[RMDB]
About this RNA:
Source: RMDB library OK1LIB, as collected in RNAgym. Structure probing data (2A3 and DMS) for a 177-nucleotide construct. Conditions: 150 mM KOAc, 10 mM MgCl2 and 150 mM bicine (pH 8.5), 24 C. 2A3 adducts were read by reverse transcription with SuperScript II with manganese. For 2A3, 1,830 sequencing reads were counted.
RNA sequence: GGGAACGACUCGAGUAGAGUCGAAAAGAGCUGCAGUGAUGGGUUCCCCUGUGCGUGAAUCCAUAGCCGUGGCAGCGUAACGCGAUGAAAUAUGAGCAGCCGCAAUCUAGGUCAACGCGACGACGCCAUCUAUGCGGGACUUCGGUCCCGCAUAGAUAAAAGAAACAACAACAACAAC
Reactivity to 2A3 in 0.01 (KOAc 150mM, MgCl2 10mM, bicine 150mM(pH8.5), 24C), signal-to-noise 3, nucleotides 027 to 126: g150a010g010c010u040g000c000a040g010u020g040a020u040g000g040g000u000u010c000c050c040c040u290g140u240g240c130g000u080g010a020a010u000c000c000a000u000a060g000c010c040g050u010g070g030c020a000g000c000g000u000a060a030c010g030c000g020a020u020g060a040a070a060u150a070u130g020a030g070c020a010g150c040c010g010c020a030a070u030c010u090a060g000g090u040c010a040a000c070g000c010g080a050c070g000a000c010g040c020c010
Reactivity to DMS in 0.01 (KOAc 150mM, MgCl2 10mM, bicine 150mM(pH8.5), 24C), signal-to-noise 2, nucleotides 027 to 126: g000a020g020c040u000g000c020a100g000u050g000a100u000g000g030g000u020u000c000c030c000c160u020g020u080g000c100g040u000g010a000a030u040c020c040a000u030a170g010c040c180g050u040g000g000c050a030g000c000g000u040a050a090c000g000c010g010a020u000g000a040a230a120u080a040u000g010a090g000c060a160g090c060c020g020c030a090a120u030c060u020a100g030g000u000c050a050a150c090g000c000g010a040c080g000a050c040g010c000c030